[RMDB]
RNA sequence: GGGAACGACUCGAGUAGAGUCGAAAAAUGAAUUGAUUCGUCAAUUCAUGACCGCAAGCGAGCCGAAAGGCAUUUUAUGCGUACGGUGGCGAAAGCCUAAAAAUCAUCGUGUCUUCGGACACGAUAAAAUACUGAGCUCAUUCGUGAGCUCAGUAUUAAAAGAAACAACAACAACAAC
Reactivity to 2A3 in 0.01 (KOAc 150mM, MgCl2 10mM, bicine 150mM(pH8.5), 24C), signal-to-noise 2, nucleotides 027 to 126: a000u010g010a010a010u010u000g000a000u030u060c150g040u030c100a000a010u020u000c000a000u020g040a010c010c020g020c060a050a020g050c030g090a010g010c000c000g130a110a030a020g080g000c010a000u030u080u020u090a110u130g010c000g000u060a040c020g040g030u030g010g000c030g070a130a020a010g010c030c000u090a110a070a000a010a040u190c080a000u010c020g000u000g000u000c010u020u040c130g040g000a000c000a000c010g000a000u010a000a030
Reactivity to DMS in 0.01 (KOAc 150mM, MgCl2 10mM, bicine 150mM(pH8.5), 24C), signal-to-noise 3, nucleotides 027 to 126: a020u000g000a000a010u000u010g010a040u010u010c160g020u000c000a000a020u000u000c000a000u000g000a180c020c020g000c120a080a140g040c030g020a080g010c000c000g000a090a080a150g000g010c010a080u010u010u000u000a110u010g000c020g050u010a060c070g000g010u000g010g000c010g010a130a050a120g010c010c000u000a010a020a040a100a060u010c160a020u000c000g010u000g010u000c000u000u000c210g000g000a000c000a000c000g000a000u000a010a060
About this RNA: Source: RMDB library M2PK50, as collected in RNAgym. Chemical mapping of a 177-nucleotide RNA with 2A3 and DMS. Reactivities are rounded to 0.1 and cut off at 0 and 3. For 2A3, 2,751 sequencing reads were counted. For DMS the reverse transcriptase was MarathonRT.